[RMDB]
RNA sequence: GGGAACGACUCGAGUAGAGUCGAAAACAUGAACCUGCAUUGAUUACGUCCCUGCCCCUGUACACACCGCCCGUCGCUACUACGGAUUGAAUUAUUUAGUGAGGUCUCUGACGCCUUGCGUGUUACGGAAGGCGUCCAAGUUCGCUUGGACGCCUUCAAAAGAAACAACAACAACAAC
Reactivity to DMS in 0.01 (KOAc 150mM, MgCl2 10mM, bicine 150mM(pH8.5), 24C), signal-to-noise 6, nucleotides 027 to 126: c110a100u000g010a090a100c040c020u010g000c050a090u000u010g010a090u000u010a090c120g010u000c010c010c010u000g000c040c020c010c040u000g000u010a070c110a060c090a060c070c050g010c050c030c030g030u000c060g010c050u000a050c070u000a080c080g010g010a100u010u000g010a070a080u000u000a080u000u010u010a080g020u000g000a080g010g000u000c060u000c090u000g010a080c120g010c010c020u000u000g030c040g020u000g010u000u010a100c160g000
Reactivity to 2A3 in 0.01 (KOAc 150mM, MgCl2 10mM, bicine 150mM(pH8.5), 24C), signal-to-noise 4, nucleotides 027 to 126: c020a040u080g060a040a070c020c010u020g030c040a110u050u110g050a060u100u190a060c040g060u040c010c000c000u010g020c010c000c000c010u020g050u090a030c050a000c000a010c050c010g020c010c000c000g030u030c020g000c030u040a060c020u030a020c040g050g050a050u030u060g060a090a110u150u100a090u140u240u070a050g010u000g060a020g050g000u010c060u000c030u110g050a040c030g010c010c000u000u020g010c010g020u080g030u030u060a020c020g040